The record gives the reactivity of an RNA of 207 nucleotides to 2A3 and DMS.

RNA sequence: GGGAACGACUCGAGUAGAGUCGAAAAUACCGUCUUCUCCCCGACGGGUUCAAUCCAUAGCUUCACGUUGUGUAGCGUAGGUGGAAGGUAUCGUGUGGUGUAUAAACACCACAUAGUCUCUUAGGGGUCAAGCUGAUAAACUUCGGUUUAUCAGCAACACCCUGUGAUGGUUCGCCAUCACAGGGUGAAAAGAAACAACAACAACAAC
Reactivity to 2A3 in 0.01 (KOAc 150mM, MgCl2 10mM, bicine 150mM(pH8.5), 24C), signal-to-noise 3, nucleotides 027 to 156: u080a020c010c010g030u020c020u110u010c010u080c000c010c000c000g010a000c040g010g020g000u080u120c060a050a040u050c010c020a010u030a070g000c010u040u050c020a010c080g300u300u300g000u110g030u070a010g000c040g090u130a100g010g160u020g030g000a030a020g110g010u090a050u230c090g000u020g000u000g010g000u000g050u020a070u080a290a160a050c000a000c010c000a000c000a000u000a000g000u000c010u010c010u090u140a040g000g000g020g020u040c090a030a030g000c000u000g000a000u000a000a030a000c010u020u020c090g040g050u050u000u000a000u000c000a000g040c000a000a000
Reactivity to DMS in 0.01 (KOAc 150mM, MgCl2 10mM, bicine 150mM(pH8.5), 24C), signal-to-noise 1, nucleotides 027 to 156: u010a120c000c000g000u000c020u000u000c060u000c050c000c000c110g010a090c030g020g000g010u000u000c060a090a060u000c010c010a060u010a190g000c000u020u000c060a020c050g030u000u010g060u000g010u020a030g000c010g010u000a020g030g030u010g020g010a010a080g000g000u020a040u000c060g120u000g010u000g050g060u010g030u000a130u000a130a100a260c000a020c000c000a000c000a010u000a070g030u000c080u000c020u000u010a290g010g000g030g020u010c060a090a250g000c020u000g000a010u000a000a010a000c000u000u000c300g020g030u000u000u000a000u000c000a010g050c010a010a060
DMS adducts were read by reverse transcription with MarathonRT. For 2A3 the reverse transcriptase was SuperScript II with manganese. Source: RMDB library M2RFPK, as collected in RNAgym.